[RMDB]
Chemical mapping of a 207-nucleotide RNA with DMS and 2A3. The reactions ran in a buffer of 150 mM KOAc, 10 mM MgCl2 and 150 mM bicine (pH 8.5), at 24 C.
RNA sequence: GGGAACGACUCGAGUAGAGUCGAAAAAUGGUAGUUAGUCUACUCGCUAUCCUAGUUACUUUGGAGUAAUCUAAAGUGUGAGUAAACGGGCGAAAGUCUGUAAAAUACUGGGGACAUAGGGUCAACAAGAACUAGUAGACCUUCGGGUCUACUAGAAGCUAUAUACCGCGUUCGCGCGGUAUAUAGCAAAAGAAACAACAACAACAAC
Reactivity to DMS in 0.01 (KOAc 150mM, MgCl2 10mM, bicine 150mM(pH8.5), 24C), signal-to-noise 2, nucleotides 027 to 156: a120u000g010g030u020a080g010u000u010a020g040u000c020u000a010c000u000c040g040c020u000a120u000c000c050u000a060g010u000u000a040c010u000u000u010g020g000a080g040u000a130a130u000c000u000a010a010a030g020u000g000u000g000a070g000u000a040a230a050c000g030g030g030c020g030a110a110a200g020u000c000u020g010u010a010a030a010a090u000a030c020u000g020g030g020g000a060c060a060u000a130g010g010g000u010c080a040a080c050a080a100g010a070a160c020u000a020g010u010a010g000a030c000c000u000u020c300g060g010g000u010c000u000a010c000u000a000g010a020a060
Reactivity to 2A3 in 0.01 (KOAc 150mM, MgCl2 10mM, bicine 150mM(pH8.5), 24C), signal-to-noise 3, nucleotides 027 to 156: a000u070g010g020u030a040g040u100u060a040g010u040c040u050a030c010u050c010g020c020u080a080u180c000c000u010a010g000u020u030a010c010u020u000u020g020g020a020g040u110a150a110u000c000u020a030a010a000g000u000g010u020g020a000g000u030a050a100a000c010g000g010g020c000g030a070a020a000g010u000c010u020g020u020a000a020a030a010u120a040c010u020g000g000g000g000a020c020a040u130a050g070g010g050u090c040a030a030c030a130a100g080a100a050c000u010a010g010u000a000g010a000c000c000u010u040c130g100g000g000u010c000u010a000c000u000a000g000a000a000